[RMDB]
RNA sequence: GGGAACGACUCGAGUAGAGUCGAAAACGGGCUACAAUGGAUAGGACAAUGGGUAACUACACCGAAAGGUGGCGUCAAUCUCUUAAACCUAUCCUUAGUUCGGAUUGAGGGCUGGAACUCGCCCUCAGAAACUAGUAACGUUCGCGUUACUAGUUUCAAAAGAAACAACAACAACAAC
Reactivity to 2A3 in 0.01 (KOAc 150mM, MgCl2 10mM, bicine 150mM(pH8.5), 24C), signal-to-noise 5, nucleotides 027 to 126: c000g000g000g010c010u050a020c130a160a180u160g000g000a010u010a010g000g020a020c070a080a100u130g010g000g020u040a000a000c000u030a020c010a010c010c000g030a070a030a000g000g000u000g010g010c000g010u020c030a080a060u020c030u000c000u060u130a110a180a070c000c000u000a010u010c000c000u010u000a000g000u000u000c000g010g020a060u050u100g000a010g010g020g010c030u080g060g070a100a080c040u030c120g020c000c000c000u000c000a000